Chemical mapping of a 177-nucleotide RNA with DMS.
RNA sequence: GGGAACGACUCGAGUAGAGUCGAAAAUAAUUUUGGUAUAUGGUGUGAGGAGGGGAUCCAAGUUCGUUCUACAGCCUAUAUAGCCUGCAGAUGAGCAAUGUUAGUGACCUUGAAAGUAGAGGCCCAGGUCCAUACGAUGGUUCGCCAUCGUAUGGACAAAAGAAACAACAACAACAAC
Reactivity to DMS in 0.01 (KOAc 150mM, MgCl2 10mM, bicine 150mM(pH8.5), 24C), signal-to-noise 2, nucleotides 027 to 126: u010a100a060u000u000u010u000g020g020u000a080u000a090u000g020g010u000g020u010g000a140g050g010a120g000g030g000g000a070u010c060c060a060a140g030u000u000c020g010u000u000c000u000a040c050a130g010c050c060u000a100u010a100u000a080g010c250c040u000g000c040a010g010a080u010g010a090g010c060a040a040u000g000u000u030a080g000u020g010a040c070c030u000u000g010a050a050a120g000u000a060g000a100g040g010c020c010c050a060g030
The RNA was probed in 150 mM KOAc, 10 mM MgCl2 and 150 mM bicine (pH 8.5) at 24 C.